The record gives the reactivity of an RNA of 177 nucleotides to DMS and 2A3. The data come from the RNA Mapping Database (RMDB), libraries RFM100 and RFMREP. The reactions ran in a buffer of 150 mM KOAc, 10 mM MgCl2 and 150 mM bicine (pH 8.5), at 24 C.

RNA sequence: GGGAACGACUCGAGUAGAGUCGAAAAAUCGAACAAUUCUUCUCGGAGCGAUCUGAGGUUUUAAUGGAGAUAGCGGUUCCUGCGCAACCCAUUGAUCUUGUUACAUUCUUAAGAAUGACAAGGACGCUUGAUAGAUUUGUUUCGACAAAUCUAUCAAAAAAGAAACAACAACAACAAC
Reactivity to DMS in 0.01 (KOAc 150mM, MgCl2 10mM, bicine 150mM(pH8.5), 24C), signal-to-noise 7, nucleotides 027 to 126: a050u020c060g000a110a110c130a080a080u010u010c030u010u010c010u000c020g000g010a020g000c240g000a110u000c010u000g000a030g010g000u020u010u010u010a030a050u010g000g010a110g010a110u010a080g010c020g000g010u000u000c020c030u000g010c030g010c030a100a090c050c010c020a060u020u000g010a050u020c000u000u000g010u010u020a120c020a020u000u000c010u010u020a140a150g000a010a000u010g000a060c000a000a030g000g010a100c160g010c180
Reactivity to 2A3 in 0.01 (KOAc 150mM, MgCl2 10mM, bicine 150mM(pH8.5), 24C), signal-to-noise 8, nucleotides 027 to 126: a000u060c020g010a040a030c060a080a090u110u010c040u120u010c000u020c000g030g020a010g010c030g040a080u010c010u030g010a040g050g040u020u050u050u150a060a060u060g050g000a090g030a100u100a060g040c020g030g020u030u030c010c010u040g000c020g000c020a040a050c000c000c010a030u020u080g040a040u030c000u000u020g010u040u040a090c000a010u020u010c000u130u230a120a080g000a020a010u000g000a000c000a010a020g040g000a040c060g000c070